[RMDB]
RNA sequence: GGGAACGACUCGAGUAGAGUCGAAAAGCUUUAAAUAGUUGAUUAAGCUGAUCAGCUUGUAAUAUGUAAUCUCUUCUGGGCCAUCAGAUCCAUAAUGGGUUUACUAGACUAUAUAAGAGAAAUAGUAUGUAUCUAUCAAGUUCGCUUGAUAGAUACAAAAAGAAACAACAACAACAAC
Reactivity to DMS in 0.01 (KOAc 150mM, MgCl2 10mM, bicine 150mM(pH8.5), 24C), signal-to-noise 6, nucleotides 027 to 126: g000c020u000u000u000a070a100a070u010a020g010u000u000g000a150u030u020a030a040g020c040u000g000a130u050c140a050g010c000u010u000g010u020a060a110u020a070u020g010u010a020a040u010c010u000c010u000u000c090u000g000g000g000c030c030a150u030c170a080g010a060u000c010c020a050u010a040a060u020g000g010g000u000u010u000a040c020u000a110g000a050c010u000a030u010a100u010a040a100g000a050g000a050a080a100u030a080g000u020a110
Reactivity to 2A3 in 0.01 (KOAc 150mM, MgCl2 10mM, bicine 150mM(pH8.5), 24C), signal-to-noise 4, nucleotides 027 to 126: g020c020u070u050u050a080a130a030u110a040g010u010u030g060a040u080u100a060a000g020c040u030g020a200u170c100a000g010c000u040u030g060u150a040a090u070a110u220g040u040a010a070u000c020u000c000u050u000c040u000g000g000g030c020c020a130u110c010a060g040a160u000c000c000a020u030a050a090u170g030g000g000u000u000u000a000c010u010a010g030a040c000u000a010u020a020u030a150a020g060a000g030a050a090a040u070a050g100u040a020